[RMDB]
RNA sequence: GGGAACGACUCGAGUAGAGUCGAAAAGAUAUGGAUUGAAACAGCAACAGCUAUAAGUAUCGGAAACGAUACAUAGACAUGCUGUCUUCAAUCCUAAGUCAAAGCCGUCAUGUUCGCAUGACGGCAAGAUACAUUUGGCGUUCGCGCCAAAUGUAUCAAAAGAAACAACAACAACAAC
Reactivity to DMS in 0.01 (KOAc 150mM, MgCl2 10mM, bicine 150mM(pH8.5), 24C), signal-to-noise 3, nucleotides 027 to 126: g000a050u000a280u010g000g000a030u000u000g010a040a010a000c000a010g010c010a080a070c270a240g000c010u000a010u000a100a130g010u000a010u000c000g010g000a130a080a130c010g020a000u000a000c000a010u000a000g000a050c060a300u000g010c030u000g020u010c190u000u000c000a010a010u000c000c000u000a010a120g010u000c050a110a090a160g000c000c000g010u000c000a000u000g010u000u000c290g030c000a020u000g010a010c010g000g000c000a000a010
Reactivity to 2A3 in 0.01 (KOAc 150mM, MgCl2 10mM, bicine 150mM(pH8.5), 24C), signal-to-noise 3, nucleotides 027 to 126: g020a000u070a030u110g020g010a010u010u010g010a020a010a000c000a010g000c060a050a100c070a300g000c040u020a030u050a300a150g020u010a010u000c000g060g000a030a040a020c000g000a010u010a000c000a030u010a000g000a010c120a170u300g010c000u000g020u010c070u000u030c000a000a000u000c010c000u000a060a010g020u030c060a150a090a040g000c020c000g000u010c010a000u000g040u120u180c300g020c210a000u020g010a010c000g000g000c000a000a000
An RNA of 177 nucleotides, treated with DMS and 2A3 and read out base by base. The data come from the RNA Mapping Database (RMDB), library TTRDES. For DMS the reverse transcriptase was MarathonRT. Conditions: 150 mM KOAc, 10 mM MgCl2 and 150 mM bicine (pH 8.5), 24 C. The 2A3 profile rests on 6,330 reads.